Conditions: 150 mM KOAc, 10 mM MgCl2 and 150 mM bicine (pH 8.5), 24 C. Chemical mapping of a 177-nucleotide RNA with DMS.

[RMDB]
RNA sequence: GGGAACGACUCGAGUAGAGUCGAAAAGAUAUGGAAUCCUUUGGCGAGAAACUAGUCGGAAACGACUACUUUCGAUGAGCCAUGGGAUUCCUAAGUCAAAACAAUGCCAGGUUCGCCUGGCAUUGAACAGUGUAAGAUGCUUCGGCAUCUUACACUGAAAAGAAACAACAACAACAAC
Reactivity to DMS in 0.01 (KOAc 150mM, MgCl2 10mM, bicine 150mM(pH8.5), 24C), signal-to-noise 2, nucleotides 027 to 126: g000a020u000a050u020g010g000a020a020u000c000c000u020u000u000g020g010c000g000a210g000a010a020a010c090u000a000g000u000c000g040g010a020a000a030c000g000a020c000u000a010c150u000u000u000c000g010a170u030g000a160g010c020c000a000u000g000g000g010a000u000u000c000c010u000a000a040g010u000c010a120a090a140a230c020a000a010u000g010c000c000a010g000g000u000u010c300g000c010c000u000g000g000c000a010u000u000g000a090a170

For DMS, 2,365 sequencing reads were counted.